Chemical mapping of a 177-nucleotide RNA with DMS and 2A3. Conditions: 150 mM KOAc, 10 mM MgCl2 and 150 mM bicine (pH 8.5), 24 C. 2A3 adducts were read by reverse transcription with SuperScript II with manganese.
[RMDB]
RNA sequence: GGGAACGACUCGAGUAGAGUCGAAAAUAAGAGCAUGUACGAAUCACGAUAUGAGAGUUCCUGGUGAAUCCCGGGUACAAGGAUAGGUAUUAAUCUCCCACUGCGUUCCCUUGCAGUAGGGAUAUAAUUGCUAAACUUAAUUCGUUAAGUUUAGCAAAAAAGAAACAACAACAACAAC
Reactivity to DMS in 0.01 (KOAc 150mM, MgCl2 10mM, bicine 150mM(pH8.5), 24C), signal-to-noise 9, nucleotides 027 to 126: u010a080a090g010a090g020c080a040u000g000u000a050c050g010a110a070u000c050a070c080g010a130u010a100u010g010a090g010a220g010u000u000c010c010u000g010g010u000g000a100a100u000c110c020c020g010g000g010u000a040c070a060a050g010g010a070u000a040g010g010u000a050u000u010a070a070u010c130u000c000c000c010a050c010u000g000c000g010u010u000c020c020c020u000u010g010c000a010g010u000a080g020g000g010a010u010a020u010a060a120
Reactivity to 2A3 in 0.01 (KOAc 150mM, MgCl2 10mM, bicine 150mM(pH8.5), 24C), signal-to-noise 1, nucleotides 027 to 126: u160a030a030g060a010g020c100a050u120g000u090a030c050g040a080a040u050c030a010c110g020a030u040a060u300g110a120g010a010g040u020u020c000c000u030g070g000u030g050a050a040u030c000c000c020g010g030g020u070a040c020a010a040g070g000a030u050a070g050g040u100a050u080u090a110a070u060c030u030c030c010c000a020c000u000g000c010g020u040u050c000c000c030u000u050g000c000a010g010u110a150g000g020g000a000u020a000u000a020a020